[RMDB]
RNA sequence: GGGAACGACUCGAGUAGAGUCGAAAACAUGCGCGUAAGAACAGCCGCGUUCAUGCAGAGUCGAGAGCCCUUCUGGUUCGUUGCGUGACUGUAGAAAUAUACAUCUUGCGACUGAGCGUCGGCUCGGUCUAGUCAUCGGGUUCGCUCGGUGGCUAGAAAAAGAAACAACAACAACAAC
Reactivity to 2A3 in 0.01 (KOAc 150mM, MgCl2 10mM, bicine 150mM(pH8.5), 24C), signal-to-noise 9, nucleotides 027 to 126: c020a020u070g010c020g010c010g040u060a130a060g060a190a040c030a050g060c020c010g000c010g010u050u070c020a020u060g040c040a020g010a010g040u050c020g010a010g010a030g040c010c000c000u050u050c050u060g030g000u020u020c020g010u020u040g000c010g010u030g010a030c080u020g020u020a020g070a120a200a010u250a020u010a040c020a030u020c010u040u200g020c020g020a010c030u100g010a010g010c010g060u080c020g040g000c000u000c000g000g000
Reactivity to DMS in 0.01 (KOAc 150mM, MgCl2 10mM, bicine 150mM(pH8.5), 24C), signal-to-noise 9, nucleotides 027 to 126: c030a040u020g000c030g000c010g000u020a080a080g010a100a100c200a110g010c160c020g010c030g020u010u040c050a040u020g010c140a130g000a060g010u010c030g000a080g010a100g000c020c020c050u010u020c070u010g000g010u000u010c030g010u010u010g000c030g000u000g010a040c250u010g000u000a010g000a030a030a030u020a040u000a010c030a030u000c010u000u010g010c010g000a000c000u000g000a030g000c010g010u020c090g010g010c000u000c010g010g000

Chemical mapping of a 177-nucleotide RNA with 2A3 and DMS.
For 2A3, 35,022 sequencing reads were counted.